[RMDB]
RNA sequence: GGGAACGACUCGAGUAGAGUCGAAAAGGUAGACACUGCACCAAAACAGUUAAAUACUCAUACAGUAUCACUUGCAAAAACGAUAGGAGAACUCGUAUGGACUCCCAAAGGCUAUCGACCACGCCUGCGAUGUUACCAGGUUCGCCUGGUAACAUCGAAAAGAAACAACAACAACAAC
Reactivity to DMS in 0.01 (KOAc 150mM, MgCl2 10mM, bicine 150mM(pH8.5), 24C), signal-to-noise 1, nucleotides 027 to 126: g000g030u000a050g000a120c130a010c020u000g030c040a100c090c160a120a040a220a070c060a000g000u000u000a040a040a150u000a140c040u000c000a040u000a040c020a040g000u000a020u040c080a120c090u000u000g000c150a060a050a040a060a020c140g000a080u000a020g010g000a100g000a020a060c010u010c110g000u000a030u000g000g000a040c110u000c010c030c020a060a070a010g030g010c020u000a080u000c040g010a080c100c050a140c160g010c040c000u000g020
Reactivity to 2A3 in 0.01 (KOAc 150mM, MgCl2 10mM, bicine 150mM(pH8.5), 24C), signal-to-noise 2, nucleotides 027 to 126: g030g030u020a000g040a000c030a000c070u060g000c010a100c100c080a010a040a110a070c030a010g010u040u040a060a200a020u110a020c030u070c050a020u010a080c030a020g000u040a040u220c030a030c100u060u070g000c070a030a000a170a180a050c120g030a090u160a060g110g020a100g030a100a010c020u010c060g020u060a030u040g030g080a020c010u000c080c000c000a070a090a000g070g000c030u050a000u180c120g030a050c080c010a020c120g030c000c010u080g030